[RMDB]
RNA sequence: GGGAACGACUCGAGUAGAGUCGAAAAUGCAGCAGAAUACAUUGAUAAACUAGACGAACUUAAAACUAACAUAGAUGAAAGACAAGCUGUGGCAACAAGUGCUGCUGCUGCUCUAGGUCGUAAGACUGAUGAGAUUUUGUAUACUGCUAUGGACGCACGCGAUCUCUGUAUUCGUACAGAGAUCGCGAAAAGAAACAACAACAACAAC
Reactivity to 2A3 in 0.01 (KOAc 150mM, MgCl2 10mM, bicine 150mM(pH8.5), 24C), signal-to-noise 1, nucleotides 027 to 156: u050g010c040a000g010c000a000g000a050a000u100a060c010a050u000u130g010a010u100a100a150a170c020u100a100g050a050c070g090a000a180c110u160u210a000a070a040a040c090u100a060a000c010a060u120a040g030a030u080g040a150a040a000g070a030c050a060a010g000c000u020g030u020g060g080c040a010a050c000a250a000g040u070g000c020u000g000c000u020g000c070u040g000c000u000c000u040a000g000g000u020c040g020u070a140a000g000a020c010u020g020a000u300g000a020g000a000u020u020u040u000g020u000a050u000a090c100u010g000c050u130a050u150g190g010a050c020g040c110a040
Source: RMDB library OK3TST, as collected in RNAgym. Structure probing data (2A3) for a 207-nucleotide construct. As a SHAPE reagent, 2A3 marks flexible, mostly unpaired nucleotides at the ribose 2'-OH. 2A3 adducts were read by reverse transcription with SuperScript II with manganese.